[RMDB]
RNA sequence: GGGAACGACUCGAGUAGAGUCGAAAACAGCAGCACCGUCACCACAUCAGGAUUGCCAGCCACUCCGGACCACCGCCGCCUUCAGGUAAUCGCCGUAACACGCACCCUAUGGCGUACAUUGCACGUCUACAUACGUCAAGUUCGCUUGACGUAUGUAAAAAGAAACAACAACAACAAC
Reactivity to DMS in 0.01 (KOAc 150mM, MgCl2 10mM, bicine 150mM(pH8.5), 24C), signal-to-noise 6, nucleotides 027 to 126: c070a100g010c050a070g010c050a050c050c040g020u000c030a080c040c050a070c100a080u000c070a070g000g020a100u000u010g000c050c040a080g000c060c040a090c040u000c050c040g020g000a090c070c040a050c050c040g010c050c040g000c030c020u000u000c050a050g010g020u010a060a070u000c060g010c010c010g000u000a050a080c090a110c120g010c060a120c030c010c020u000a100u010g010g000c000g020u000a070c090a110u000u010g010c080a040c070g000u010c050
Reactivity to 2A3 in 0.01 (KOAc 150mM, MgCl2 10mM, bicine 150mM(pH8.5), 24C), signal-to-noise 3, nucleotides 027 to 126: c040a000g070c010a000g010c020a020c030c030g050u040c020a010c040c000a020c010a100u060c010a010g040g050a100u030u080g020c000c000a010g010c020c010a040c030u020c020c020g060g020a040c030c010a020c020c030g030c000c000g010c010c000u060u080c030a000g020g040u070a060a060u060c040g000c010c000g020u010a040a020c040a010c090g030c010a080c030c000c000u070a080u120g000g000c020g020u020a020c020a090u050u150g020c080a020c050g020u020c030

An RNA of 177 nucleotides, treated with DMS and 2A3 and read out base by base.
The reactions ran in a buffer of 150 mM KOAc, 10 mM MgCl2 and 150 mM bicine (pH 8.5), at 24 C.
For 2A3 the reverse transcriptase was SuperScript II with manganese.